This 177-nucleotide RNA was probed chemically with 2A3 and DMS. It was measured as part of the RMDB libraries RFM100 and RFMREP. Conditions: 150 mM KOAc, 10 mM MgCl2 and 150 mM bicine (pH 8.5), 24 C. For DMS the reverse transcriptase was MarathonRT.
RNA sequence: GGGAACGACUCGAGUAGAGUCGAAAAGAGCUCCGAGCGGCGUUAGCGCCCUCUGCGAAGCGCCCUGCGAUGCCCCAGCCACUGUGAACCUUUCUGCCUGCCCAGAUACACUCAACCCAGGACGAAAGAAUAGGAUGUUAUUCGUAACAUCCUAUUCAAAAGAAACAACAACAACAAC
Reactivity to 2A3 in 0.01 (KOAc 150mM, MgCl2 10mM, bicine 150mM(pH8.5), 24C), signal-to-noise 9, nucleotides 027 to 126: g040a010g010c020u010c020c020g010a030g020c130g030g000c020g070u110u130a060g060c010g020c020c030c000u030c030u040g050c050g030a070a020g010c010g010c020c000c000u030g020c030g040a060u100g020c000c000c000c010a010g020c020c010a050c030u040g030u060g080a050a070c010c000u020u100u060c020u050g030c010c000u040g010c000c000c000a010g010a020u080a030c060a010c010u060c020a030a070c010c000c010a010g070g040a020c050g080a070a050a090
Reactivity to DMS in 0.01 (KOAc 150mM, MgCl2 10mM, bicine 150mM(pH8.5), 24C), signal-to-noise 9, nucleotides 027 to 126: g010a170g010c030u000c030c040g000a060g020c300g010g010c020g010u020u020a150g010c030g010c050c020c040u000c040u010g020c070g010a090a110g010c040g010c020c010c020u010g010c070g000a100u020g000c040c020c010c030a100g020c020c030a050c060u010g010u010g000a070a090c070c030u000u010u010c020u000g010c030c020u000g010c020c010c030a070g010a090u020a070c090a060c040u010c040a050a110c020c010c010a100g010g010a090c090g010a070a080a090